Conditions: 150 mM KOAc, 10 mM MgCl2 and 150 mM bicine (pH 8.5), 24 C.
This 307-nucleotide RNA was probed chemically with DMS and 2A3.
In probing experiments dimethyl sulfate is read out at A N1 and C N3, which are open when not base-paired.
For DMS the reverse transcriptase was MarathonRT.
The DMS profile rests on 8,309 reads.
Source: RMDB library POS240, as collected in RNAgym.
RNA sequence: GGGAACGACUCGAGUAGAGUCGAAAAGAAUAGCUUCGGCUAUUCACGAUGUCUCGUGAGAGACAUCGAACAGACAAAAAGAAGAAAGAAAACAGAACCGGUGACGGUUCUGACCACGUAGCUUCGGCUACGUGGAACCAUGCACUACGGUGCAUGGACCAUGACGUACGCGUCAUGGAAGAUCAGUACGUGAGUACUGAUCACGACCAUCUUCGGAUGGUCGAAAGGGGUAAAACCCCUCGCCUACGUAAGCGUUAUUACGCCCAAGUUGGAAGUUCGCUUCCAACAAAAGAAACAACAACAACAAC
Reactivity to DMS in 0.01 (KOAc 150mM, MgCl2 10mM, bicine 150mM(pH8.5), 24C), signal-to-noise 3, nucleotides 027 to 266: g000a020a010u000a000g000c010u000u020c230g040g000c000u000a000u000u000c000a140c010g000a010u000g000u000c010u000c000g010u010g010a180g000a020g000a000c010a000u000c000g010a220a140c290a110g020a170c200a070a090a060a150a130g000a100a120g020a130a130a080g000a130a050a210a170c000a010g000a010a000c020c000g070g030u010g000a130c000g010g020u000u000c010u010g000a090c010c010a000c000g000u000a000g010c000u010u020c160g010g000c000u000a010c000g010u000g000g000a040a070c020c010a000u000g000c000a000c010u000a060c140g000g030u020g000c000a000u000g000g010a140c000c010a000u000g000a010c000g010u000a050c190g040c000g020u000c000a000u000g000g010a160a060g000a000u000c000a010g020u000a000c000g000u010g000a140g000u000a010c000u000g010a000u000c020a100c030g000a000c000c000a000u000c000u000u020c140g030g000a020u000g000g010u010c000g000a030a060a040g000g000g010g000u010a070a020a030a300c000c000c000c000u010c010g000c000c060u000a160c010g000u020a020a010g010c010g020u000u060a010u000u000a000c000g010c070c100c110a070a120
Reactivity to 2A3 in 0.01 (KOAc 150mM, MgCl2 10mM, bicine 150mM(pH8.5), 24C), signal-to-noise 9, nucleotides 027 to 266: g000a000a000u010a000g000c010u060u060c300g100g000c000u010a000u010u000c000a000c000g000a000u000g000u000c000u000c010g030u140g050a210g000a000g010a020c000a000u000c000g000a020a010c060a020g300a040c130a040a170a060a050a020g230a100a060g130a080a200a030g110a030a160a040a010c010a000g000a000a000c010c000g050g150u180g110a050c010g000g000u020u010c000u000g000a000c000c000a000c000g000u000a000g000c000u050u060c300g120g000c000u000a000c000g000u000g000g000a000a000c000c000a000u000g000c000a000c010u050a020c290g120g000u000g000c000a000u000g000g000a000c010c000a000u000g000a000c000g000u040a020c300g030c000g130u000c000a000u000g010g010a010a020g000a000u000c000a000g000u000a000c030g080u080g150a050g010u000a000c000u000g000a000u000c000a000c000g000a000c000c000a000u000c000u020u010c030g120g000a000u000g000g000u000c000g000a000a000a000g020g010g000g020u070a020a030a060a110c010c000c000c000u020c000g000c000c030u100a020c010g000u000a010a000g000c000g040u070u100a000u010u000a000c000g030c030c030c010a080a010